[RMDB]
RNA sequence: GGGAACGACUCGAGUAGAGUCGAAAACGAUAGACGCGGAUUCCGAUUCGUACUUAUAAUUAUGUCUUAUACUGUCAACUCACCGUCUCAGCUUGUGUAUCUCUCGUCCGCUUGGGCUGACCCAACGGUUAAGGGCAUGGUUCGCCAUGCCCUUAACAAAAGAAACAACAACAACAAC
Reactivity to DMS in 0.01 (KOAc 150mM, MgCl2 10mM, bicine 150mM(pH8.5), 24C), signal-to-noise 1, nucleotides 027 to 126: c180g000a050u020a030g000a050c080g030c000g020g000a090u000u010c090c040g030a060u000u040c030g010u000a120c040u000u020a080u030a050a070u000u040a070u010g000u000c060u010u020a040u050a170c130u000g010u000c030a060a040c090u020c000a070c140c020g000u020c040u000c040a090g000c030u010u000g000u050g000u000a040u010c010u000c030u000c090g000u000c000c000g000c040u000u030g010g000g000c100u000g000a180c010c000c000a110a090c100g030
Reactivity to 2A3 in 0.01 (KOAc 150mM, MgCl2 10mM, bicine 150mM(pH8.5), 24C), signal-to-noise 4, nucleotides 027 to 126: c070g030a040u060a110g050a050c070g000c030g040g000a040u120u040c070c090g050a020u000u010c020g060u080a080c060u090u120a080u100a280a170u160u190a070u200g060u020c010u010u070a090u050a090c070u080g080u130c060a060a050c020u010c020a040c000c030g050u020c000u010c020a030g000c000u080u120g020u040g050u120a090u020c000u000c010u020c040g030u020c030c000g050c050u030u050g080g070g030c000u010g060a090c000c000c000a040a050c070g020